[RMDB]
Chemical mapping of a 177-nucleotide RNA with DMS and 2A3. The DMS profile rests on 7,812 reads. Source: RMDB library OK1LIB, as collected in RNAgym. Conditions: 150 mM KOAc, 10 mM MgCl2 and 150 mM bicine (pH 8.5), 24 C.
RNA sequence: GGGAACGACUCGAGUAGAGUCGAAAAGCUGACAUUUCAAUUGAAAGUGUCUUCAUGGUUCAAGAGUUUGCCAGUAGAAUAGAAAAAGAUGGUGUGGAGAGGUGGUCUUGCUCAUUCUGGGGCUGCACCUAUGCGUAGGGUUCGCCCUACGCAUAGGAAAAGAAACAACAACAACAAC
Reactivity to DMS in 0.01 (KOAc 150mM, MgCl2 10mM, bicine 150mM(pH8.5), 24C), signal-to-noise 4, nucleotides 027 to 126: g030c030u020g010a030c030a030u000u010u020c040a280a190u030u050g010a040a030a040g010u000g010u010c030u010u010c050a060u040g000g000u000u000c060a050a040g000a150g030u000u010u010g000c010c020a030g000u010a040g000a060a150u010a130g010a070a070a070a100a110g000a070u010g000g000u010g010u020g000g000a050g010a060g000g010u000g010g010u000c030u010u010g010c030u010c040a100u020u010c070u020g010g000g030g000c020u000g030c110a150
Reactivity to 2A3 in 0.01 (KOAc 150mM, MgCl2 10mM, bicine 150mM(pH8.5), 24C), signal-to-noise 9, nucleotides 027 to 126: g050c050u040g020a020c010a030u030u040u030c110a180a300u130u210g080a120a040a010g070u030g020u020c000u050u080c040a080u100g070g030u070u060c070a100a020g040a040g080u040u090u120g050c030c030a020g020u040a020g060a110a070u070a080g140a040a090a010a010a000g040a040u060g000g070u060g020u060g060g030a080g000a010g030g040u050g020g010u010c030u020u050g020c010u020c060a100u180u030c040u070g030g000g010g000c040u030g010c010a040